Chemical mapping of a 177-nucleotide RNA with DMS and 2A3. Values cover nucleotides 27 to 126. Conditions: 150 mM KOAc, 10 mM MgCl2 and 150 mM bicine (pH 8.5), 24 C. Source: RMDB library M2PK90, as collected in RNAgym. The 2A3 profile rests on 1,821 reads. Reactivities are rounded to 0.1 and cut off at 0 and 3.
RNA sequence: GGGAACGACUCGAGUAGAGUCGAAAAGCAUUGGGAAAGUUAAUCAAAAGUGCAUCAAAACUUUCCCUAAACGAAAUCAAAAUCGUUAUGAUGCACUUUUGACAUGGAUUAAGAUGAAUAGACACAAAGGUACAUCGAUAUUCGUAUCGAUGUACCUAAAAGAAACAACAACAACAAC
Reactivity to DMS in 0.01 (KOAc 150mM, MgCl2 10mM, bicine 150mM(pH8.5), 24C), signal-to-noise 2, nucleotides 027 to 126: g020c090a070u010u000g000g020g020a160a060a100g010u010u010a090a110u020c010a020a000a010a020g040u000g000c010a010u000c010a020a090a130a130c200u010u000u010c000c000c010u020a040a020a020c010g000a040a080a060u010c300a070a080a150a100u000c000g010u000u000a230u000g010a020u000g000c000a000c000u000u000u000u000g030a050c090a050u000g000g000a050u010u010a050a070g000a070u000g000a020a080u000a040g010a090c070a040c120a040a130
Reactivity to 2A3 in 0.01 (KOAc 150mM, MgCl2 10mM, bicine 150mM(pH8.5), 24C), signal-to-noise 2, nucleotides 027 to 126: g060c020a080u130u150g010g010g030a050a110a060g040u110u120a060a050u020c010a000a000a030a000g020u020g000c000a000u000c020a000a000a000a180c020u000u050u010c000c000c000u000a010a000a000c000g000a020a000a080u200c120a080a050a000a170u010c000g000u010u020a050u130g000a000u000g000c010a000c000u000u000u000u010g030a020c020a040u080g080g000a080u120u100a120a040g030a080u090g010a140a040u070a090g100a040c030a000c040a110a160